[RMDB]
The data come from the RNA Mapping Database (RMDB), library 15KLIB. This 170-nucleotide RNA was probed chemically with 2A3 and DMS.
RNA sequence: GGGAACGACUCGAGUAGAGUCGAAAAAGUACAAGGGGAGAUGCUAGGAGUCGGGAGAGGUCAGAACGACUGGGAAAGAAAAGAGAGCAACGGGGCUAGCUGCCGGGUGUUCCACCUACGGGAACGGAUGGAAGUGCGUUCGCGCACUUCAAAAGAAACAACAACAACAAC
Reactivity to 2A3 in 0.01 (KOAc 150mM, MgCl2 10mM, bicine 150mM(pH8.5), 24C), signal-to-noise 3, nucleotides 027 to 129: a000g110u100a030c010a050a040g000g020g000g000a000g020a020u040g050c030u040a010g070g010a050g010u050c050g010g050g000a000g020a010g040g010u030c030a030g060a190a090c080g050a000c020u010g060g000g030a000a090a000g030a000a060a000a010g070a000g000a000g000c000a070a060c030g060g000g000g000c050u040a030g000c010u020g040c000c000g000g030g010u010g000u000u080c060c040a080c030c010u070a050c030g000g000g030a040a030c020g040g050a020u100g040
Reactivity to DMS in 0.01 (KOAc 150mM, MgCl2 10mM, bicine 150mM(pH8.5), 24C), signal-to-noise 4, nucleotides 027 to 129: a050g050u060a100c120a120a080g000g000g000g000a030g040a080u040g050c050u030a090g070g020a070g020u000c100g000g000g000a040g010a070g000g020u060c060a150g020a110a090c120g000a090c050u020g000g000g000a050a050a000g000a030a050a090a070g020a040g050a070g060c050a060a040c160g000g000g000g000c090u020a100g000c030u020g050c000c000g080g020g050u020g010u000u020c000c000a000c090c040u000a090c120g030g010g020a050a060c100g020g020a160u020g080